[RMDB]
RNA sequence: GGGAACGACUCGAGUAGAGUCGAAAAGAAUCCGACGCGGUCACAUCUAAACUUGCCACGAUCAAGAGGAGGGGCAGCGACGUAUCGGCAGCAAGCACUGCGCCGGACGACGAAGUGGUCAGGGCGCGUCCACAAUCCAGUUCGCUGGAUUGUGGACAAAAGAAACAACAACAACAAC
Reactivity to DMS in 0.01 (KOAc 150mM, MgCl2 10mM, bicine 150mM(pH8.5), 24C), signal-to-noise 2, nucleotides 027 to 126: g030a130a110u010c000c000g000a060c070g020c040g000g020u000c030a120c220a120u010c060u000a060a090a100c070u000u000g010c010c040a040c180g010a090u020c070a090a040g000a130g000g020a150g000g000g020g000c090a060g040c000g000a100c040g030u000a130u000c040g010g000c010a110g020c040a050a140g030c190a100c150u000g000c000g020c030c010g000g010a040c020g000a130c060g000a100a080g000u010g000g000u010c050a060g010g010g000c040g010c050
Reactivity to 2A3 in 0.01 (KOAc 150mM, MgCl2 10mM, bicine 150mM(pH8.5), 24C), signal-to-noise 2, nucleotides 027 to 126: g030a030a020u000c020c010g020a000c030g070c000g030g050u030c010a040c000a150u050c030u250a060a100a100c050u050u070g040c010c010a090c060g040a210u020c070a060a040g050a100g110g010a060g010g020g010g050c000a020g030c000g040a050c010g040u020a120u210c050g020g020c040a000g030c000a120a110g080c050a050c260u070g000c010g030c000c000g010g020a010c000g010a020c010g070a150a060g080u050g090g040u090c110a060g000g030g060c040g020c030

The data come from the RNA Mapping Database (RMDB), library OK2TRN. Chemical mapping of a 177-nucleotide RNA with DMS and 2A3. For 2A3 the reverse transcriptase was SuperScript II with manganese. The RNA was probed in 150 mM KOAc, 10 mM MgCl2 and 150 mM bicine (pH 8.5) at 24 C.